RNA sequence: GGGAACGACUCGAGUAGAGUCGAAAAAGUUCAAGGUACUUCACAUUCUCCGCAGCAUAGUCUUGAAGGACCAAUUCAUGUACUGAGUCCCCAUUUUUCUUUUUGUGGAAAGGACGCGGAUGGAGGCGCUUCCCUUUAUCUUCGGAUAAAGGGAAGCAAAAGAAACAACAACAACAAC
Reactivity to 2A3 in 0.01 (KOAc 150mM, MgCl2 10mM, bicine 150mM(pH8.5), 24C), signal-to-noise 1, nucleotides 027 to 126: a000g040u070u090c110a080a030g060g000u010a040c000u000u040c010a070c010a110u120u030c040u020c020c010g110c020a000g120c040a160u140a110g050u040c030u060u080g000a030a040g010g000a010c010c000a020a040u140u180c070a050u130g060u090a010c010u040g020a000g090u030c000c010c010c020a090u020u120u020u030u040c100u070u260u060u080u130g130u080g050g080a080a080a080g060g000a030c070g000c010g010g000a010u090g010g010a020g020g040c070
Reactivity to DMS in 0.01 (KOAc 150mM, MgCl2 10mM, bicine 150mM(pH8.5), 24C), signal-to-noise 2, nucleotides 027 to 126: a100g000u000u000c050a090a110g000g000u000a070c010u000u000c010a070c180a120u000u000c030u000c020c020g000c100a100g000c110a150u000a060g010u010c020u000u010g010a050a010g010g000a070c030c020a140a120u060u050c150a070u000g010u000a030c030u000g010a200g000u000c010c010c010c130a060u000u000u000u000u000c020u000u000u010u000u000g010u000g010g010a080a040a070g000g010a030c170g000c100g000g020a050u010g010g020a080g020g050c200